RNA sequence: GGGAACGACUCGAGUAGAGUCGAAAAACCUAGUUCGCUAGGUCGGAAAUCCUAAGUCUUCAACAGCCUCGCUUGUCAGAUUUGGUCGGAAACGACCAGUGAUCUUGGAUUUAGCGAGGACAUGAAGAUAUGGAGCUUAGGCCGGUUCGCCGGCCAACUCGUUUCUUAGUUUCGACUAAGAAACGAGAAAAGAAACAACAACAACAAC
Reactivity to 2A3 in 0.01 (KOAc 150mM, MgCl2 10mM, bicine 150mM(pH8.5), 24C), signal-to-noise 2, nucleotides 027 to 156: a000c000c000u000a000g000u040u040c070g000c140u000a020g030g050u040c090g070g130a140a150a010u000c000c010u060a150a090g030u000c000u000u000c010a080a060c010a130g000c000c000u000c000g000c010u010u010g030u010c000a010g010a040u080u090u060g010g010u000c000g000g010a090a050a070c010g010a000c010c000a000g000u080g020a000u030c000u050u190g170g010a060u250u300u170a010g010c020g000a000g000g000a000c000a070u040g000a000a000g000a000u000a020u040g020g000a020g060c080u190u210a100g010g000c000c020g000g040u070u030c270g030c040c050g000g000c000c000a000a000
Record summary
Chemical mapping of a 207-nucleotide RNA with 2A3. For 2A3, 1,172 sequencing reads were counted. 2A3 adducts were read by reverse transcription with SuperScript II with manganese.